[RMDB]
RNA sequence: GGGAACGACUCGAGUAGAGUCGAAAAAAAAGUGGAUGAUGAUAGCGUUAAGUUGAUUCGUAAAGGCGACAUUAAUAUGAAUUUGCAUUUUGUUGAAGGACAAACGACAACAACUUUUUACGAUAUAUCUGCAACCUAAAUUCGUUUAGGUUGCAGAAAAAGAAACAACAACAACAAC
Reactivity to 2A3 in 0.01 (KOAc 150mM, MgCl2 10mM, bicine 150mM(pH8.5), 24C), signal-to-noise 3, nucleotides 027 to 126: a010a000a010a030g170u080g040g000a080u050g010a010u020g010a020u090a040g010c010g000u010u030a080a020g010u060u030g010a140u030u060c060g030u030a050a050a040g060g000c020g010a030c060a040u160u240a170a080u200a080u230g120a100a090u080u070u110g010c020a010u010u100u000u060g020u000u010g050a050a040g060g030a040c090a110a100a000c040g060a010c010a010a000c000a000a020c020u050u060u020u040u060a020c040g010a020u040a040u000a060
Reactivity to DMS in 0.01 (KOAc 150mM, MgCl2 10mM, bicine 150mM(pH8.5), 24C), signal-to-noise 2, nucleotides 027 to 126: a030a010a030a030g060u000g010g000a030u010g000a080u030g020a040u000a010g000c020g040u000u000a050a050g000u010u000g010a070u020u000c020g000u000a040a020a000g020g010c070g000a090c060a050u000u010a050a050u050a120u010g010a070a060u020u020u010g020c000a120u000u000u030u000g000u030u000g000a150a070g000g000a080c160a060a080a080c040g000a200c120a000a020c080a010a010c200u010u000u020u010u000a070c050g000a040u010a130u010a100